RNA sequence: GGGAACGACUCGAGUAGAGUCGAAAAUCUUCUGUCAAACAGCAGAUACGGCACAUGCUAACAACAUUAACAGAUUUAAUGUUGCAAUCACUCGUGCCCAAAAAGGUAUUCUUUGUGUUAUGACAUCGCCCUCAUAUCUUCGGAUAUGAGAAAAGAAACAACAACAACAAC
Reactivity to DMS in 0.01 (KOAc 150mM, MgCl2 10mM, bicine 150mM(pH8.5), 24C), signal-to-noise 9, nucleotides 027 to 129: u020c010u000u000c050u040g020u020c050a050a060a090c050a080g060c030a050g000a010u020a030c120g020g040c000a000c000a070u030g020c120u040a140a200c000a000a000c010a000u000u000a010a000c210a210g050a220u090u030u010a000a010u010g030u000u000g000c080a060a080u050c040a040c220u030c140g020u030g040c000c020c200a030a050a030a080a000g060g030u050a000u050u020c040u020u040u030g070u040g020u020u020a080u030g020a030c000a040u060c140g050c100c060
Reactivity to 2A3 in 0.01 (KOAc 150mM, MgCl2 10mM, bicine 150mM(pH8.5), 24C), signal-to-noise 9, nucleotides 027 to 129: u030c020u240u020c030u040g010u010c020a030a030a040c010a030g140c010a000g010a040u020a060c050g010g000c000a000c000a020u040g010c020u100a150a060c010a000a000c000a000u000u010a020a020c040a160g220a300u070u040u050a000a000u000g000u000u000g020c040a030a080u070c010a020c080u110c100g000u010g000c000c000c020a050a100a030a020a020g170g010u070a090u130u090c040u040u130u140g130u010g020u040u070a250u110g010a010c010a030u100c100g060c030c010
The record gives the reactivity of an RNA of 170 nucleotides to DMS and 2A3. The RNA was probed in 150 mM KOAc, 10 mM MgCl2 and 150 mM bicine (pH 8.5) at 24 C. It was measured as part of the RMDB library 15KLIB. Reactivities are given for positions 27 through 129.